[RMDB]
RNA sequence: GGGAACGACUCGAGUAGAGUCGAAAAGCCGGGACCUAAGCCGAGGCCGAGAGGCGUAGGCGAUGGACAUCAGGUUAAUAAUCCUGAGCUCGCAACCCUUAAACUGGGGGGACGCAUGAGAAAAGAUACACUUUUCAUAGUUCGCUAUGAAAAGUGUAAAAGAAACAACAACAACAAC
Reactivity to 2A3 in 0.01 (KOAc 150mM, MgCl2 10mM, bicine 150mM(pH8.5), 24C), signal-to-noise 6, nucleotides 027 to 126: g100c020c000g000g040g020a110c000c010u070a070a010g000c000c000g010a060g160g000c010c000g040a050g000a040g020g000c030g020u030a000g000g000c000g000a000u000g000g000a000c000a060u060c040a020g020g010u020u050a090a040u080a050a030u150c000c010u040g020a020g010c000u010c010g020c000a030a080c020c000c000u030u090a250a300a150c230u210g000g010g000g020g010g020a050c090g030c040a080u280g010a020g060a030a080a010a020g110a010u070
Reactivity to DMS in 0.01 (KOAc 150mM, MgCl2 10mM, bicine 150mM(pH8.5), 24C), signal-to-noise 5, nucleotides 027 to 126: g000c010c030g000g000g000a110c040c020u000a180a300g000c000c000g000a220g000g010c000c000g020a220g000a180g020g000c020g000u000a300g010g020c000g000a150u020g000g000a060c100a110u010c050a050g000g020u000u000a120a120u010a160a070u020c010c000u000g000a070g000c060u010c010g020c030a080a300c000c000c000u020u020a030a130a090c220u020g010g000g010g000g000g000a070c240g000c040a060u010g010a100g000a120a070a090a140g000a200u010
Overview
Conditions: 150 mM KOAc, 10 mM MgCl2 and 150 mM bicine (pH 8.5), 24 C. Chemical mapping of a 177-nucleotide RNA with 2A3 and DMS. High 2A3 reactivity points to a flexible backbone, as in loops and unpaired stretches. 2A3 adducts were read by reverse transcription with SuperScript II with manganese. DMS adducts were read by reverse transcription with MarathonRT.